[RMDB]
RNA sequence: GGGAACGACUCGAGUAGAGUCGAAAAUCUUUUGUGUUGGAUGACAUAGGAAGAACUCAAGAAGGGUAUUCUGCAGCAAAAACAUUUCUGUAAUGCUCUUUCUCCCCUUUGAUCAGGUCCUAGCAAAUAUUGAUGAUCUUUUUGACAGAGAAGAAUAUACGUAUCCUAUCUUCGGAUAGGAUACGUAAAAAGAAACAACAACAACAAC
Reactivity to 2A3 in 0.01 (KOAc 150mM, MgCl2 10mM, bicine 150mM(pH8.5), 24C), signal-to-noise 2, nucleotides 027 to 156: u050c010u100u130u030u100g030u000g080u060u150g060g040a050u090g010a030c000a070u090a050g040g020a040a090g040a140a060c060u080c170a050a020g040a030a010g080g000g050u000a020u140u020c120u110g020c000a000g010c010a010a000a080a040a130c100a200u140u260u130c020u030g000u060a000a030u010g010c000u000c000u030u050u070c000u000c030c030c000c000u000u030u070g110a130u110c000a000g050g070u000c000c030u040a010g000c010a000a030a100u140a090u100u160g050a060u030g000a040u130c020u050u150u010u050u070g070a070c060a060g080a010g130a160a000g020a080a020u300a010
Reactivity to DMS in 0.01 (KOAc 150mM, MgCl2 10mM, bicine 150mM(pH8.5), 24C), signal-to-noise 2, nucleotides 027 to 156: u000c030u020u000u010u000g040u010g010u000u000g010g020a140u010g000a100c060a080u010a050g060g020a050a060g000a090a100c060u000c080a100a120g010a070a050g020g020g030u000a030u010u000c080u010g010c060a080g000c080a030a030a120a080a090c070a160u000u010u010c040u000g010u000a050a150u000g000c020u000c020u000u000u000c010u000c030c000c010c030u030u000u000g000a080u010c040a060g010g000u000c010c050u000a150g040c030a110a030a090u000a130u000u000g010a090u000g050a070u010c020u000u010u000u000u000g010a060c090a120g000a040g000a040a110g030a050a150u020a160